[RMDB]
RNA sequence: GGGAACGACUCGAGUAGAGUCGAAAAUUGUAGUCACUCCUCUUGUUUCAGCAGGCAUAUUUGGUGUAAAACCAGCUGUGUCUUUUGAUUAUCUUAUUAGGGAGGCUAAGACUAGAGUUUUAGUCGUCAACCAACAUUAGUUCGCUAAUGUUGGUUGAAAAGAAACAACAACAACAAC
Reactivity to 2A3 in 0.01 (KOAc 150mM, MgCl2 10mM, bicine 150mM(pH8.5), 24C), signal-to-noise 2, nucleotides 027 to 126: u020u030g130u020a010g010u010c000a010c050u000c010c020u050c030u050u060g040u030u090u000c030a010g000c010a000g000g000c000a010u020a000u040u030u020g030g000u020g010u090a110a140a010a030c000c000a000g000c000u010g000u000g010u020c000u020u030u010u020g020a020u000u110a080u090c050u110u120a170u100u180a080g010g010g010a010g010g020c030u100a110a010g000a000c000u010a000g010a000g070u000u010u030u030a070g060u070c040g040u000
Reactivity to DMS in 0.01 (KOAc 150mM, MgCl2 10mM, bicine 150mM(pH8.5), 24C), signal-to-noise 2, nucleotides 027 to 126: u000u000g000u000a010g010u000c010a170c120u010c000c000u010c060u000u000g000u010u000u000c010a000g010c130a020g020g000c000a010u000a000u000u000u000g000g000u000g010u010a080a090a140a030c000c000a020g020c070u000g030u000g010u000c000u000u000u000u000g000a040u010u000a040u020c130u010u020a170u010u020a160g010g000g000a020g020g010c230u000a050a090g000a020c000u000a010g000a040g010u000u000u000u000a080g010u010c100g010u000